Conditions: 150 mM KOAc, 10 mM MgCl2 and 150 mM bicine (pH 8.5), 24 C. This 177-nucleotide RNA was probed chemically with DMS and 2A3.
RNA sequence: GGGAACGACUCGAGUAGAGUCGAAAAGAUAUGGACGACCUGAUGAGCAACAGCCAACCUCGGAAACGAGGUUGGACAUGCUCGCAGGUUCGUCCUAAGUCAAAAGGCUCUGCUUCGGCAGAGCCAACAAUUAUGAAGGGUUCGCCCUUCAUAAUUGAAAAGAAACAACAACAACAAC
Reactivity to DMS in 0.01 (KOAc 150mM, MgCl2 10mM, bicine 150mM(pH8.5), 24C), signal-to-noise 6, nucleotides 027 to 126: g010a030u010a300u010g000g000a000c010g010a030c020c000u000g000a090u000g010a020g020c000a040a120c300a210g000c010c000a000a010c000c000u000c000g020g000a120a080a230c000g010a000g000g000u000u000g000g000a000c090a120u000g010c010u000c000g000c000a000g000g010u010u000c000g020u000c000c000u000a010a090g010u000c050a080a120a190a160g010g020c000u000c000u000g000c000u000u010c220g010g020c000a000g000a010g000c010c000a010a020
Reactivity to 2A3 in 0.01 (KOAc 150mM, MgCl2 10mM, bicine 150mM(pH8.5), 24C), signal-to-noise 2, nucleotides 027 to 126: g010a010u080a040u190g000g000a000c010g000a000c010c000u110g110a300u120g000a120g000c000a020a190c050a170g030c010c000a010a000c030c000u000c010g010g040a060a050a010c010g000a000g000g020u000u000g010g000a000c000a010u020g000c000u000c000g010c010a000g000g000u010u040c000g000u000c000c000u000a020a010g020u010c020a000a020a050a250g000g010c000u000c000u010g020c000u050u050c120g000g050c010a000g000a000g000c030c000a000a010

For 2A3 the reverse transcriptase was SuperScript II with manganese. 2A3 is a SHAPE reagent: it acylates the 2'-hydroxyl of flexible nucleotides of all four kinds.